[RMDB]
RNA sequence: GGGAACGACUCGAGUAGAGUCGAAAAGUUCAUCCCCUGAUCAAGGAUGCCCGAAACGGUGAGGCGGAAAGCAAAUUAAAUAACGUCAACCCAUCGGGACGGUUUGCCAGUUAAGAAGUGAGGAUUCAAAAGAUCGAACCGUUCGCGGUUCGAUCAAGAAGAGAUCAGUGUUCGCACUGAUCUCUUCAAAAGAAACAACAACAACAAC
Reactivity to DMS in 0.01 (KOAc 150mM, MgCl2 10mM, bicine 150mM(pH8.5), 24C), signal-to-noise 1, nucleotides 027 to 156: g010u000u010c040a050u000c010c020c010c050u000g030a080u000c080a190a040g000g050a030u000g000c040c020c000g000a090a090a110c120g000g000u000g010a110g060g000c010g010g000a050a060a050g000c050a080a170a200u000u030a070a150a110u050a100a130c050g060u000c010a040a070c060c000c030a210u000c050g000g040g000a130c080g000g020u000u010u000g000c060c010a030g010u000u000a020a160g020a070a090g000u010g010a130g000g000a090u010u000c020a050a020a090a090g020a040u010c020g000a000a020c000c010g050u000u010c290g090c070g040g040u010u000c030g010a000u010c000a010a080
Reactivity to 2A3 in 0.01 (KOAc 150mM, MgCl2 10mM, bicine 150mM(pH8.5), 24C), signal-to-noise 3, nucleotides 027 to 156: g040u050u090c000a040u030c030c000c000c020u080g010a060u040c050a050a050g050g010a040u090g000c000c000c000g030a100a100a030c070g010g040u050g030a130g060g050c030g020g040a180a080a040g060c150a060a040a120u210u240a080a080a080u220a040a060c030g000u000c010a000a020c020c000c000a050u030c020g010g010g020a010c010g020g000u000u060u060g060c020c020a040g010u070u100a130a040g030a070a010g050u070g110a030g080g030a060u150u000c090a050a070a070a050g000a000u000c000g000a000a000c010c010g000u060u080c250g010c020g100g000u000u010c000g000a000u000c000a000a000